[RMDB]
Structure probing data (DMS and 2A3) for a 177-nucleotide construct.
The 2A3 profile rests on 2,705 reads.
2A3 adducts were read by reverse transcription with SuperScript II with manganese.
As a SHAPE reagent, 2A3 marks flexible, mostly unpaired nucleotides at the ribose 2'-OH.
Conditions: 150 mM KOAc, 10 mM MgCl2 and 150 mM bicine (pH 8.5), 24 C.
RNA sequence: GGGAACGACUCGAGUAGAGUCGAAAAGAUAUGGACUCACUUUCGCUUGGAUUUAUACACAAGAUGAGGUCUAUAUCGGAAACGAUAUAGACUUGAGUGUAUUGUCAGCGAAACUGAGUCCUAAGUCCGGAUGGUAAUUGUUCGCAAUUACCAUCCGAAAAGAAACAACAACAACAAC
Reactivity to DMS in 0.01 (KOAc 150mM, MgCl2 10mM, bicine 150mM(pH8.5), 24C), signal-to-noise 1, nucleotides 027 to 126: g010a090u010a300u000g000g000a020c000u010c000a000c080u000u000u000c030g010c010u000u020g030g000a000u000u010u000a000u000a010c000a000c000a110a300g000a300u000g000a150g000g000u000c000u000a010u000a010u000c000g000g010a060a130a180c000g000a000u000a010u000a010g000a020c000u000u000g000a160g020u000g000u000a010u000u000g000u010c000a010g000c000g010a000a000a010c110u010g000a010g000u000c000c000u000a020a040g000u000c030
Reactivity to 2A3 in 0.01 (KOAc 150mM, MgCl2 10mM, bicine 150mM(pH8.5), 24C), signal-to-noise 2, nucleotides 027 to 126: g070a050u130a060u270g000g020a030c000u020c010a030c020u050u010u020c000g020c030u090u200g140g000a030u190u300u000a030u050a010c000a010c000a060a080g160a300u300g300a080g300g000u000c020u000a000u010a010u000c000g000g030a080a040a000c010g000a010u010a000u010a030g080a040c080u000u040g040a030g010u040g020u010a000u000u030g000u040c010a010g030c030g000a000a010a000c000u000g010a000g010u000c000c000u000a010a000g000u000c040